[RMDB]
RNA sequence: GGGAACGACUCGAGUAGAGUCGAAAAGCCAAAGAGGUCCUCAUCCAGGUUCUGCCCCUGGGUGAAGAGCUUCAUUCAUCCCAAUGAGGCAGACAGAGGCUUCUGCACAUGUUGCAUACAGUACAUAGCUAAAUUUAUAUUUCGAUAUAAAUUUAGCAAAAGAAACAACAACAACAAC
Reactivity to DMS in 0.01 (KOAc 150mM, MgCl2 10mM, bicine 150mM(pH8.5), 24C), signal-to-noise 7, nucleotides 027 to 126: g010c030c050a050a150a100g000a040g000g010u010c010c010u000c010a070u010c110c170a130g020g010u010u000c040u000g000c050c050c000c020u000g010g000g030u000g000a020a030g000a160g010c130u010u000c090a100u000u000c050a070u010c010c000c060a100a080u000g010a050g000g010c000a020g010a040c150a110g000a100g000g000c010u000u000c030u000g010c070a050c120a100u000g010u000u000g010c040a110u010a090c130a080g010u000a080c110a080u000a170
Reactivity to 2A3 in 0.01 (KOAc 150mM, MgCl2 10mM, bicine 150mM(pH8.5), 24C), signal-to-noise 3, nucleotides 027 to 126: g050c010c000a080a090a000g040a030g020g020u210c000c020u040c020a040u030c060c040a010g020g060u170u060c030u100g020c010c010c000c010u010g000g000g010u030g000a010a000g040a020g020c050u090u060c020a100u050u050c030a080u140c000c030c010a000a120u110g040a110g030g000c010a000g010a010c030a030g100a040g030g010c000u040u020c030u050g010c050a050c020a150u200g090u170u090g060c050a030u120a220c040a060g160u140a030c020a100u150a040